[RMDB]
RNA sequence: GGGAACGACUCGAGUAGAGUCGAAAAGUAACGGCGAGCGAAAUCGACUUAGAACAAACUGAAUCCCUUUUAGUAAUAUUAGGGAGAUGUGGUGUAUAGACAUACUUUUAGGCCUCGGGGGAUAAAUGGGUAAGAAUAAAUUCGUUUAUUCUUACCCAAAAGAAACAACAACAACAAC
Reactivity to 2A3 in 0.01 (KOAc 150mM, MgCl2 10mM, bicine 150mM(pH8.5), 24C), signal-to-noise 9, nucleotides 027 to 126: g040u040a070a030c020g050g010c020g020a030g020c050g080a070a020a090u080c030g070a080c040u060u060a060g050a110a030c050a100a080a010c050u070g030a060a100u020c000c000c000u000u010u010u000a040g000u060a050a090u010a040u070u020a000g000g010g000a030g010a040u070g070u090g040g080u050g040u050a060u060a080g090a020c030a030u080a060c030u020u080u050u090a060g020g020c000c000u010c030g010g010g010g000g000a030u070a120a160a050u070
Reactivity to DMS in 0.01 (KOAc 150mM, MgCl2 10mM, bicine 150mM(pH8.5), 24C), signal-to-noise 9, nucleotides 027 to 126: g000u010a060a130c110g010g010c040g010a070g020c050g010a050a090a090u010c050g000a070c030u020u020a080g010a100a120c120a070a080a040c040u010g000a140a150u010c000c000c000u000u000u000u000a010g000u050a100a090u000a010u000u000a010g010g010g000a010g000a050u020g010u010g000g010u000g010u010a080u020a070g020a080c100a100u010a050c050u000u010u010u010a090g000g000c030c020u000c040g020g010g000g000g000a090u030a020a050a100u020
This 177-nucleotide RNA was probed chemically with 2A3 and DMS.
The reactions ran in a buffer of 150 mM KOAc, 10 mM MgCl2 and 150 mM bicine (pH 8.5), at 24 C.